[RMDB]
The record gives the reactivity of an RNA of 177 nucleotides to DMS. Conditions: 150 mM KOAc, 10 mM MgCl2 and 150 mM bicine (pH 8.5), 24 C. The DMS profile rests on 1,649 reads.
RNA sequence: GGGAACGACUCGAGUAGAGUCGAAAAGAUAUGGACCUACUGCUACUGGACUUGGAUUUAUCGGAAACGAUUGUCAGUCCGUAGUUAGGUCCUAAGUCUAAAAGGGGGAUAGUUCGCUAUCCCCCAAGUUCUACCGAAUGUUCGCAUUCGGUAGAACAAAAGAAACAACAACAACAAC
Reactivity to DMS in 0.01 (KOAc 150mM, MgCl2 10mM, bicine 150mM(pH8.5), 24C), signal-to-noise 2, nucleotides 027 to 126: g000a040u000a300u020g000g000a010c000c000u000a020c300u000g020c000u000a010c000u040g030g000a030c000u010u000g000g000a030u000u000u000a000u010c000g000g000a050a100a210c000g010a020u000u000g000u000c000a010g040u010c000c000g040u000a000g000u000u000a010g020g000u000c010c000u000a000a060g000u000c010u000a060a050a120a150g020g020g000g000g010a020u000a000g020u010u030c290g000c020u000a010u000c000c020c000c000c000a000a010